This 177-nucleotide RNA was probed chemically with DMS and 2A3. Reactivities are rounded to 0.1 and cut off at 0 and 3. 2A3 adducts were read by reverse transcription with SuperScript II with manganese. The RNA was probed in 150 mM KOAc, 10 mM MgCl2 and 150 mM bicine (pH 8.5) at 24 C.
RNA sequence: GGGAACGACUCGAGUAGAGUCGAAAAUAAAAGAGUGCGUGGUAGCACAAACCAGACCAAUGAUAAGUGCAUGGUCGCACAAGUACAGCUUCGCCAGUACAAAGCGAACAACAACAACAACAAAAAACAUGAGGAUCAGAUUCGUCUGAUCCUCAUGAAAAGAAACAACAACAACAAC
Reactivity to DMS in 0.01 (KOAc 150mM, MgCl2 10mM, bicine 150mM(pH8.5), 24C), signal-to-noise 2, nucleotides 027 to 126: u040a050a070a080a110g010a140g050u000g020c050g010u000g010g000u010a110g000c020a020c020a040a150a120c090c080a120g010a160c090c060a060a000u000g020a070u030a050a250g000u000g000c000a070u000g000g020u000c070g030c010a010c020a020a100g010u010a030c220a070g000c140u000u000c040g000c000c050a050g020u000a070c100a100a060a050g000c020g000a030a020c040a020a040c040a000a040c050a020a020c120a000a010c060a000a060a130a030a040a080
Reactivity to 2A3 in 0.01 (KOAc 150mM, MgCl2 10mM, bicine 150mM(pH8.5), 24C), signal-to-noise 1, nucleotides 027 to 126: u120a000a100a030a080g160a010g000u000g010c030g010u060g100g100u130a070g000c000a000c010a040a050a000c010c000a010g040a030c100c000a020a210u110g040a090u060a240a100g030u020g010c020a020u070g050g010u060c070g000c010a020c030a090a000g080u130a080c020a040g030c070u060u030c010g000c020c040a000g020u080a080c120a180a060a000g020c000g030a040a000c000a020a000c010a010a010c010a010a000c000a170a010c050a020a100a000a020a000a000
For 2A3, 1,067 sequencing reads were counted. The data come from the RNA Mapping Database (RMDB), library M2PK90.